An RNA of 177 nucleotides, treated with DMS and 2A3 and read out base by base.
DMS adducts were read by reverse transcription with MarathonRT.
The RNA was probed in 150 mM KOAc, 10 mM MgCl2 and 150 mM bicine (pH 8.5) at 24 C.
2A3 adducts were read by reverse transcription with SuperScript II with manganese.
Values cover nucleotides 27 to 126.
Reactivities are rounded to 0.1 and cut off at 0 and 3.
RNA sequence: GGGAACGACUCGAGUAGAGUCGAAAAUAUCGCGAAGUACGCCAGCAUGAUUUCAAGCAACGAAUUAUACUAAUUCGAGAGGCAGUACUAAAUCAAGAUUGGUCGCAAGUUGGCGCUUUUUUAGGUAGUGAUUAUUAGUGUUCGCACUAAUAAUCACAAAAGAAACAACAACAACAAC
Reactivity to DMS in 0.01 (KOAc 150mM, MgCl2 10mM, bicine 150mM(pH8.5), 24C), signal-to-noise 6, nucleotides 027 to 126: u000a050u000c040g010c240g010a070a060g010u010a060c050g010c000c010a050g030c030a150u010g020a110u000u010u000c160a080a110g000c040a120a190c020g010a010a000u000u010a060u020a140c240u010a010a040u000u000c020g000a130g010a180g020g000c030a040g010u000a070c100u000a050a050a080u000c090a040a120g010a180u000u000g000g000u000c040g010c110a060a070g020u010u000g000g000c080g000c040u000u000u000u000u000u000a120g000g010u000a090
Reactivity to 2A3 in 0.01 (KOAc 150mM, MgCl2 10mM, bicine 150mM(pH8.5), 24C), signal-to-noise 2, nucleotides 027 to 126: u090a000u010c050g020c010g060a020a000g000u020a020c030g010c020c000a000g010c020a030u080g030a070u070u150u190c070a070a080g000c010a010a060c000g020a000a000u040u030a150u070a220c150u100a050a030u020u010c000g020a010g000a010g280g000c030a030g030u030a040c030u020a020a070a010u040c030a030a040g080a150u030u080g000g030u070c020g000c080a050a060g020u040u020g040g000c000g010c010u130u070u020u020u050u060a050g080g000u020a040

For 2A3, 2,728 sequencing reads were counted.